This 177-nucleotide RNA was probed chemically with 2A3. The 2A3 profile rests on 452 reads. Conditions: 150 mM KOAc, 10 mM MgCl2 and 150 mM bicine (pH 8.5), 24 C. 2A3 adducts were read by reverse transcription with SuperScript II with manganese.
RNA sequence: GGGAACGACUCGAGUAGAGUCGAAAAGGCUCGGCGUUGUAGGCGGUGGAAUUUCGCGACGCGCUUCUCAUGGUUCAGCUGGGUCACGAUCAGUGCGAACUUGACGUCGGUCCAUUCUUCGUCGGCGAGAUACGCGCACGUUCGCGUGCGCGUAUCUAAAAGAAACAACAACAACAAC
Reactivity to 2A3 in 0.01 (KOAc 150mM, MgCl2 10mM, bicine 150mM(pH8.5), 24C), signal-to-noise 1, nucleotides 027 to 126: g040g000c030u050c040g000g060c030g030u030u020g090u090a080g050g000c030g050g000u090g010g090a130a030u020u230u270c060g000c040g010a020c000g070c020g020c110u130u070c000u020c000a140u200g000g000u040u000c000a000g000c000u040g030g030g000u190c010a000c040g060a040u100c000a040g050u000g000c110g000a140a000c000u030u140g050a050c050g000u010c000g000g030u020c020c000a070u030u010c020u130u050c070g000u040c030g070g000c070g020